[RMDB]
RNA sequence: GGGAACGACUCGAGUAGAGUCGAAAAAAUGUCUUCUUAAGUUUGGAGAAUUCUGCCUUAAGAAGCAGCUCCGAGAAAACGAGGAACGGAAAGAAUCCUCAAGGUACAUGUCUUAUUCCUAGCAGAAGGGGGGAGCGAGCUGAGGGAUGAAGAGUUCGGUGUAGUAGUAGUUCGCUACUACUACACCAAAAGAAACAACAACAACAAC
Reactivity to DMS in 0.01 (KOAc 150mM, MgCl2 10mM, bicine 150mM(pH8.5), 24C), signal-to-noise 1, nucleotides 027 to 156: a110a100u010g030u010c010u000u010c010u000u000a060a000g000u000u000u000g000g000a100g010a190a170u010u010c010u010g050c300c030u000u000a050a060g000a090a050g010c000a100g000c040u020c000c000g010a150g010a140a050a080a080c060g000a080g030g030a060a220c100g020g000a080a050a100g000a100a090u000c040c000u000c010a080a080g010g010u000a080c050a050u000g000u010c010u000u000a160u000u000c000c030u000a060g010c070a100g000a080a190g010g020g030g000g040g000a040g010c020g000a080g030c060u010g000a080g000g020g000a080u000g030a030a100g000a070g070u000u020c130
Reactivity to 2A3 in 0.01 (KOAc 150mM, MgCl2 10mM, bicine 150mM(pH8.5), 24C), signal-to-noise 6, nucleotides 027 to 156: a000a030u080g040u030c010u020u000c010u010u010a040a030g040u080u240u270g100g010a170g100a290a260u190u000c020u040g030c000c000u010u010a030a000g000a010a000g000c010a010g010c010u010c030c040g040a070g050a090a110a020a030c060g000a010g010g020a040a050c040g040g080a090a110a050g030a050a090u030c000c000u010c040a020a040g060g000u080a050c030a070u120g050u020c010u050u090a090u080u060c020c020u030a030g000c030a020g050a130a080g000g020g010g010g000g000a010g030c060g020a010g000c040u030g040a030g000g020g020a020u050g030a060a010g010a000g050u080u130c090
An RNA of 207 nucleotides, treated with DMS and 2A3 and read out base by base. For DMS the reverse transcriptase was MarathonRT. Reactivities are given for positions 27 through 156.